[RMDB]
Description: Structure probing data (DMS and 2A3) for a 177-nucleotide construct. The RNA was probed in 150 mM KOAc, 10 mM MgCl2 and 150 mM bicine (pH 8.5) at 24 C. Values cover nucleotides 27 to 126. For DMS, 6,430 sequencing reads were counted. The 2A3 profile rests on 7,000 reads.
RNA sequence: GGGAACGACUCGAGUAGAGUCGAAAAGUAUAGGGAGUGUUCGUCAACUUCGUAAUGCUAAUCAAAAAGUCUUCAAAUGUAUCGAUCAUUCGUGUAGUCAAUCAAAUAAGAAGUAACAUGUACUACAGCAGCAUAGAAUAUUCGUAUUCUAUGCUGCAAAAGAAACAACAACAACAAC
Reactivity to DMS in 0.01 (KOAc 150mM, MgCl2 10mM, bicine 150mM(pH8.5), 24C), signal-to-noise 4, nucleotides 027 to 126: g000u010a060u000a130g000g000g000a060g020u000g000u010u030c160g050u010c100a110a010c020u000u000c040g050u040a120a050u010g000c040u000a110a200u020c130a100a040a060a040a120g000u010c050u000u000c070a020a130a010u000g010u010a100u000c040g000a080u000c060a060u010u020c050g020u020g000u000a060g000u020c030a060a060u010c070a070a090a100u040a060a080g000a080a060g020u010a090a070c130a040u030g020u020a020c030u020a080c090a090
Reactivity to 2A3 in 0.01 (KOAc 150mM, MgCl2 10mM, bicine 150mM(pH8.5), 24C), signal-to-noise 6, nucleotides 027 to 126: g070u040a020u120a090g070g000g000a030g030u060g040u120u110c070g120u120c070a050a020c030u020u020c040g120u100a010a080u040g010c020u030a100a030u130c120a050a030a040a100a020g060u020c040u090u060c060a050a080a120u160g070u070a140u120c050g060a050u070c050a060u130u090c060g030u020g020u060a010g020u030c060a040a150u010c020a110a050a130u220a100a040g140a060a000g020u060a020a060c030a110u130g040u130a020c050u020a010c020a020